[RMDB]
RNA sequence: GGGAACGACUCGAGUAGAGUCGAAAACGAGGUGAGGUAGGCCUCGUUAACAAACCGCAAAAAAAUAGUCGCAAACGACGAAAACUACGCACUCGCAGCUUAAUAACCUGCGCUGAGCCCUUCUCCCAAAACUGAGGUAGGUUCGCCUACCUCAGAACUACUACGGAAACUUCGGUUUCCGUAGUAGAAAAGAAACAACAACAACAAC
Reactivity to DMS in 0.01 (KOAc 150mM, MgCl2 10mM, bicine 150mM(pH8.5), 24C), signal-to-noise 1, nucleotides 027 to 156: c010g020a070g090g050u010g000a050g030g030u020a140g020g050c040c050u000c010g080u020u000a070a090c070a130a190a110c070c000g040c030a000a000a000a100a160a010a260u000a090g000u000c040g050c050a100a100a240c000g000a050c010g000a090a090a050a160c000u010a040c000g020c060a140c100u020c000g000c060a040g030c040u030u070a090a140u000a100a080c180c010u000g010c000g000c110u010g000a110g000c000c020c020u020u000c030u050c010c020c040a090a040a040a110c020u000g000a060g000g000u000a000g010g050u000u000c300g070c000c000u030a010c000c000u000c020a020g140a060a200
Reactivity to 2A3 in 0.01 (KOAc 150mM, MgCl2 10mM, bicine 150mM(pH8.5), 24C), signal-to-noise 4, nucleotides 027 to 156: c000g000a000g010g010u050g030a030g060g030u050a010g030g020c000c000u010c000g000u000u040a010a010c010a010a070a060c040c040g040c110a110a090a030a030a000a030a110u140a060g010u010c010g040c130a120a130a100c060g040a010c010g040a040a060a030a020c060u090a030c040g060c110a040c010u040c010g010c000a010g010c000u030u040a050a020u030a100a060c000c000u010g000c020g020c110u030g050a050g030c000c010c020u070u070c040u080c020c020c000a040a090a100a110c010u000g000a000g010g000u000a000g020g010u010u070c140g030c010c000u000a010c010c000u000c000a000g000a000a000